The record gives the reactivity of an RNA of 177 nucleotides to 2A3 and DMS. Values cover nucleotides 27 to 126. Conditions: 150 mM KOAc, 10 mM MgCl2 and 150 mM bicine (pH 8.5), 24 C. For 2A3 the reverse transcriptase was SuperScript II with manganese.
[RMDB]
RNA sequence: GGGAACGACUCGAGUAGAGUCGAAAACUUGAGUAUGGAACGGUCGCCCACGUGUGAGGAGGUUGCGACGGAUUGCCCUGUUAGCUUUCUCUGAGGGUAGGGGGCGCGUUAAGAGUAUCCCCAUAGGAUAAAUAUAAAUUUUCGAAUUUAUAUUUAUAAAAGAAACAACAACAACAAC
Reactivity to 2A3 in 0.01 (KOAc 150mM, MgCl2 10mM, bicine 150mM(pH8.5), 24C), signal-to-noise 1, nucleotides 027 to 126: c010u040u100g040a010g070u230a150u300g100g140a040a070c030g020g110u100c030g120c000c020c000a040c050g140u230g050u020g030a040g090g010a000g000g050u030u090g080c090g010a000c030g000g010a140u150u200g000c010c020c000u000g000u070u040a010g000c000u000u040u000c000u000c010u020g020a010g000g080g070u110a090g060g010g000g000g000c030g010c000g020u000u010a010a040g020a010g010u020a080u030c000c010c000c010a090u110a040g030g030
Reactivity to DMS in 0.01 (KOAc 150mM, MgCl2 10mM, bicine 150mM(pH8.5), 24C), signal-to-noise 2, nucleotides 027 to 126: c000u000u010g000a160g020u030a040u030g000g000a050a020c060g000g010u030c000g010c000c000c010a060c020g010u040g010u030g030a200g000g010a030g030g020u000u000g000c050g020a050c020g000g010a200u010u050g010c150c050c020u010g010u020u020a080g020c040u000u000u010c000u000c030u010g000a120g000g010g030u010a070g030g010g000g000g030c010g020c010g010u010u000a060a160g000a110g000u010a100u010c020c000c000c070a180u040a080g000g000